[RMDB]
RNA sequence: GGGAACGACUCGAGUAGAGUCGAAAACUGCCGCCGGGACGCAGUGAUCCUCGCAGGGUCGCACGGUCGCCUCGAGUCGGCCUCGUGUCGGCUCGACCUGCGAGGGGAGCGAGUGGCGAGCCCGACCAAAACUUUCUCGCCUUCGGGCGAGAAAGAAGAUGAAAGGUUACUUCGGUAACCUUUCAUCAAAAGAAACAACAACAACAAC
Reactivity to 2A3 in 0.01 (KOAc 150mM, MgCl2 10mM, bicine 150mM(pH8.5), 24C), signal-to-noise 2, nucleotides 027 to 156: c030u070g020c000c010g020c000c010g100g040g190a130c070g010c070a160g210u000g000a000u000c000c000u000c010g000c000a000g000g000g090u180c070g000c080a110c120g030g030u060c000g000c010c010u000c010g000a000g010u000c000g030g020c010c010u060c090g300u300g020u040c000g010g000c000u000c010g020a030c000c000u000g000c000g000a020g020g000g010g000a000g020c020g010a040g130u060g010g010c000g000a010g060c000c010c010g010a000c010c000a000a190a000a000c000u000u000u000c000u020c000g000c000c000u070u080c140g100g000g000c000g050a000g010a000a000a000g010a000a010